[RMDB]
This 177-nucleotide RNA was probed chemically with DMS.
RNA sequence: GGGAACGACUCGAGUAGAGUCGAAAAGAUAUGGAAUAGCGAUGAAACCCAGACACGAGGAUCAUAUAUAGCUUUCGGAAACGAAAGCUAUAUAUGGGAGUGUUUGGGUGGAGCUAUUCCUAAGUCACGAAAGCUAGUAGUUCGCUACUAGCUUUCGAAAAGAAACAACAACAACAAC
Reactivity to DMS in 0.01 (KOAc 150mM, MgCl2 10mM, bicine 150mM(pH8.5), 24C), signal-to-noise 1, nucleotides 027 to 126: g000a090u000a300u000g010g000a000a000u000a000g000c000g000a150u020g000a220a220a060c000c000c010a010g020a000c000a000c000g000a060g010g020a140u030c000a010u000a030u000a000u000a000g000c000u000u000u010c000g030g010a120a120a250c010g000a030a000a000g020c000u010a000u000a000u000a000u000g000g000g020a160g010u010g010u000u000u000g010g000g000u000g000g000a100g020c000u000a000u000u010c000c000u000a040a050g000u000c030a280